[RMDB]
RNA sequence: GGGAACGACUCGAGUAGAGUCGAAAAGAUAUGGAGAUUCUUCCCGCACGUUGAAAUCGGAAACGAUGGAGUGCUGGGAAGAGAUCUCCUAAGUCAAAAUCCCCUAUGUGUUCGCACAUAGGGGAAACUUACAAAAAGAGUUCGCUCUUUUUGUAAGAAAAGAAACAACAACAACAAC
Reactivity to 2A3 in 0.01 (KOAc 150mM, MgCl2 10mM, bicine 150mM(pH8.5), 24C), signal-to-noise 2, nucleotides 027 to 126: g000a020u070a050u160g010g000a020g010a020u030u000c010u000u000c020c010c020g000c000a010c010g210u300u060g060a040a040a010u010c010g000g040a100a060a020c020g000a010u020g000g020a060g000u030g020c220u300g040g000g000a000a000g010a010g000a010u000c000u000c000c010u010a060a010g040u000c020a000a010a000a300u040c000c000c000c000u000a010u010g040u010g030u040u080c240g060c140a000c000a000u010a000g000g000g000g000a010a000a020
Reactivity to DMS in 0.01 (KOAc 150mM, MgCl2 10mM, bicine 150mM(pH8.5), 24C), signal-to-noise 2, nucleotides 027 to 126: g010a030u010a300u010g000g010a010g000a000u010u000c000u000u000c000c000c000g000c000a010c000g010u010u020g000a070a110a020u000c000g010g000a160a130a190c000g010a010u000g000g010a120g020u000g000c000u020g030g000g000a010a010g000a020g000a000u000c000u000c000c000u000a020a090g000u000c040a080a090a140a150u000c000c000c000c000u000a010u000g010u000g010u000u010c240g020c000a000c010a010u000a020g000g000g000g000a000a000a020